[RMDB]
RNA sequence: GGGAACGACUCGAGUAGAGUCGAAAAGAAUCCGGCGCUGCCCUGGAUCAGCAGCCGCCGCCCCGACGGUCGGUGGUGGAUGUGCGUCGACCAGGCUUCACCGCAGCGGUAGGCCGACGCCUUUACCGCGGAGGGGCUGGUUCGCCAGCCCCUCCGCAAAAGAAACAACAACAACAAC
Reactivity to 2A3 in 0.01 (KOAc 150mM, MgCl2 10mM, bicine 150mM(pH8.5), 24C), signal-to-noise 3, nucleotides 027 to 126: g010a010a030u050c020c000g000g010c010g020c030u020g040c020c000c020u070g050g000a070u060c020a000g020c000a010g020c040c000g000c030c000g110c000c000c000c000g280a300c130g030g160u240c020g000g000u100g000g060u020g020g050a140u060g080u090g160c080g090u120c150g010a010c000c000a020g080g000c000u070u050c030a050c000c020g020c010a010g060c020g000g020u070a000g070g010c050c030g040a080c070g000c020c010u060u130u100a110c040c000